[RMDB]
RNA sequence: GGGAACGACUCGAGUAGAGUCGAAAACACUCUUCAUGCCAAUCUUGUCGGUGUAUAAUACCACGCGUCGACAGGCACAGUGGUUUAUGGAGCCUAAUCACGAGCUUUUUUUAGCAUGGCAAGAGCAUCCACUCUCUAGUUUCGACUAGAGAGUGGAAAAAGAAACAACAACAACAAC
Reactivity to DMS in 0.01 (KOAc 150mM, MgCl2 10mM, bicine 150mM(pH8.5), 24C), signal-to-noise 3, nucleotides 027 to 126: c150a120c050u000c030u000u010c050a030u000g000c010c080a030a130u010c060u000u010g030u000c070g010g030u000g010u020a040u010a040a090u030a090c110c070a050c080g000c050g010u000c020g020a100c300a100g010g000c080a040c070a190g000u000g000g010u000u000u000a080u000g010g010a150g000c030c040u000a040a020u040c110a070c080g000a160g030c120u000u000u000u000u000u000u000a020g030c030a030u000g010g010c120a040a010g010a020g000c190a110
Reactivity to 2A3 in 0.01 (KOAc 150mM, MgCl2 10mM, bicine 150mM(pH8.5), 24C), signal-to-noise 3, nucleotides 027 to 126: c030a010c020u020c010u040u060c020a070u060g010c010c020a090a110u020c010u030u040g010u020c030g040g010u060g040u030a060u040a120a160u170a090c030c010a040c090g000c020g040u030c020g010a070c020a110g000g030c030a030c010a070g010u010g030g010u000u000u090a090u140g090g040a040g060c000c010u040a060a020u110c030a050c090g040a050g030c000u120u160u030u050u020u080u220a010g010c020a000u020g010g000c050a000a020g010a010g050c030a060
Structure probing data (DMS and 2A3) for a 177-nucleotide construct.
Conditions: 150 mM KOAc, 10 mM MgCl2 and 150 mM bicine (pH 8.5), 24 C.
For 2A3 the reverse transcriptase was SuperScript II with manganese.
DMS (dimethyl sulfate) methylates the pairing face of unpaired adenines and cytosines.
It was measured as part of the RMDB library OK2TST.
Values cover nucleotides 27 to 126.
For DMS the reverse transcriptase was MarathonRT.
For 2A3, 2,495 sequencing reads were counted.